[RMDB]
RNA sequence: GGGAACGACUCGAGUAGAGUCGAAAAUCAAUCAUGUUCGCAUGAUUGAAAAGGUCAGGUGACCAAACCACGACACGCGUCGAACCGACCGAGCCCGGAGGCAAAGUGCAAUCUUCGGAUUGCACAAGUAACAGUAAUGCUUCGGCAUUACUGUUACAAAAGAAACAACAACAACAAC
Reactivity to 2A3 in 0.01 (KOAc 150mM, MgCl2 10mM, bicine 150mM(pH8.5), 24C), signal-to-noise 4, nucleotides 027 to 126: u010c000a000a000u000c000a000u010g030u030u050c160g000c110a000u000g000a010u000u000g010a030a030a010a030g030g000u020c080a060g020g140u070g100a050c040c000a070a080a020c080c040a090c110g050a010c010a010c090g130c090g000u010c010g030a050a040c030c010g020a020c010c010g010a020g050c010c020c000g040g070a070g050g040c080a130a070a050g000u000g000c000a000a000u010c010u020u100c270g090g000a000u000u010g000c000a000c000a000a010
Reactivity to DMS in 0.01 (KOAc 150mM, MgCl2 10mM, bicine 150mM(pH8.5), 24C), signal-to-noise 5, nucleotides 027 to 126: u000c000a000a000u000c000a000u010g010u010u010c200g030c000a000u000g000a010u000u000g000a010a050a100a100g020g010u010c010a090g030g020u010g020a100c110c070a050a060a110c110c120a140c060g010a040c060a130c200g010c150g000u000c010g000a110a080c030c020g000a030c030c000g010a120g000c010c010c010g010g010a090g000g020c200a050a050a120g010u000g000c000a010a000u000c000u000u010c190g010g000a010u000u000g000c000a010c000a010a050